Background
The record gives the reactivity of an RNA of 207 nucleotides to DMS and 2A3. For DMS the reverse transcriptase was MarathonRT.
RNA sequence: GGGAACGACUCGAGUAGAGUCGAAAACGGAAGCAUUAAAACCAUUCGAGCUAGCCAAUGCGUGGCGUGUCUCUCCGCAGCGUGUUGGCGAAUGUAAAGAGUGACUAAGCAUGUAGUACCGAGGAUGAUAAGAGCAAUUCGUUCGCGAAUUGCUCAACCUGUGCUUUACGUUCGCGUAAAGCACAGGAAAAGAAACAACAACAACAAC
Reactivity to DMS in 0.01 (KOAc 150mM, MgCl2 10mM, bicine 150mM(pH8.5), 24C), signal-to-noise 1, nucleotides 027 to 156: c080g010g040a250a110g020c030a120u000u020a090a060a150a190c040c070a170u000u000c020g020a200g020c030u000a240g030c000c020a030a010u010g000c010g030u000g020g020c060g000u020g020u020c040u000c040u010c270c000g010c000a060g010c000g050u000g010u000u020g000g020c030g000a050a010u010g030u000a100a030a140g000a080g000u000g010a060c050u000a060a090g000c070a040u000g000u000a040g030u000a080c030c030g010a060g000g010a150u010g030a050u010a110a180g000a010g020c000a020a020u010u000c000g060u000u000c280g060c020g020a000a010u000u010g010c010u000c000a030a030
Reactivity to 2A3 in 0.01 (KOAc 150mM, MgCl2 10mM, bicine 150mM(pH8.5), 24C), signal-to-noise 1, nucleotides 027 to 156: c080g050g030a010a070g020c050a040u050u100a050a010a030a120c040c000a050u070u090c040g000a010g050c010u050a020g000c010c000a000a010u030g000c000g010u030g080g000c010g000u050g050u000c040u000c010u000c070c010g000c000a010g000c000g000u010g000u000u010g050g020c000g000a000a000u030g010u060a000a090a020g010a030g000u000g000a000c020u020a000a040g020c010a050u050g010u120a040g020u050a070c010c090g000a030g080g040a030u210g010a030u140a280a080g010a000g000c000a000a000u000u000c000g000u000u020c130g010c000g070a000a000u000u000g010c000u000c000a000a000